[RMDB]
RNA sequence: GGGAACGACUCGAGUAGAGUCGAAAAGUAUGGAUUCCACCGUGACGGCUCAAUCACACAAGUGCCAACGAUAACGAGGCGCUCGCUAUUGCUGCGUAACUGACGGCCUGACGGUCUGACGUUACAAAAAACGAAAAGUGGUUCGCCACUUUUCGAAUCGUAUGACGUUGUUCGCAACGUCAUACGAAAAAGAAACAACAACAACAAC
Reactivity to 2A3 in 0.01 (KOAc 150mM, MgCl2 10mM, bicine 150mM(pH8.5), 24C), signal-to-noise 3, nucleotides 027 to 156: g100u070a080u210g060g060a030u050u000c020c010a010c000c050g020u030g040a060c070g020g020c030u070c080a060a090u100c020a040c020a020c030a190a020g000u040g040c020c020a050a030c050g060a100u080a140a040c070g010a050g070g020c070g010c070u050c000g020c050u080a060u180u110g050c040u080g000c030g030u000a030a020c000u010g010a030c010g010g040c000c030u090g060a040c080g000g010u020c000u010g020a030c030g020u040u000a020c030a000a080a000a010a000a020c010g010a000a000a000a000g010u000g000g000u030u030c140g020c020c000a000c000u000u000u000u000c000g000a000a060
Reactivity to DMS in 0.01 (KOAc 150mM, MgCl2 10mM, bicine 150mM(pH8.5), 24C), signal-to-noise 1, nucleotides 027 to 156: g070u000a110u000g050g040a140u020u010c010c010a070c000c050g000u000g030a220c170g020g080c020u000c040a090a070u000c090a100c050a110c070a010a110g020u000g040c030c090a060a090c000g020a180u020a080a110c030g010a230g030g020c080g020c040u010c040g000c000u010a090u020u000g000c010u000g000c040g020u000a020a040c030u000g000a300c290g040g000c000c010u000g070a140c230g000g000u010c070u000g010a300c220g000u000u000a040c020a000a040a110a090a060a170c010g010a000a010a000a000g030u000g020g030u000u000c270g020c000c000a020c010u000u000u000u010c010g000a020a060
An RNA of 207 nucleotides, treated with 2A3 and DMS and read out base by base. DMS adducts were read by reverse transcription with MarathonRT. The RNA was probed in 150 mM KOAc, 10 mM MgCl2 and 150 mM bicine (pH 8.5) at 24 C. For 2A3, 2,161 sequencing reads were counted.